[RMDB]
RNA sequence: GGGAACGACUCGAGUAGAGUCGAAAAUCUUCGUCCGGCGUGAGUCCUUCGACGAGGAAGUCGAACUGGCCGUUGUCCUCGCGGUUGAUUCGGUCGCGGACGGCGGUGUUGAUCCACGGGAUAUCGACCAUGCAUAGCCCUUCGGGGCUAUGCAUGGAAAAGAAACAACAACAACAAC
Reactivity to 2A3 in 0.01 (KOAc 150mM, MgCl2 10mM, bicine 150mM(pH8.5), 24C), signal-to-noise 2, nucleotides 027 to 126: u010c020u030u120c080g060u030c030c060g000g040c050g030u090g100a070g030u100c020c000u050u150c020g040a080c050g000a010g240g050a100a070g030u020c020g010a200a040c110u030g170g030c000c040g000u010u000g010u060c030c030u110c020g000c060g070g000u060u070g060a240u130u210c140g020g020u030c020g020c000g010g000a000c000g000g000c000g000g010u050g080u060u110g000a030u060c000c030a040c080g110g000g010a060u050a020u130c030g010a060
Reactivity to DMS in 0.01 (KOAc 150mM, MgCl2 10mM, bicine 150mM(pH8.5), 24C), signal-to-noise 1, nucleotides 027 to 126: u010c050u000u070c060g000u000c010c120g010g030c010g010u030g000a120g000u070c000c150u010u100c120g030a000c000g000a060g010g000a090a050g020u000c060g000a000a070c150u080g010g000c040c040g040u000u040g000u000c050c000u040c090g000c000g000g040u000u010g010a100u050u050c160g000g010u040c070g010c000g000g040a000c000g000g020c040g000g020u000g020u020u000g020a080u000c070c100a070c070g050g120g000a020u000a040u000c030g020a280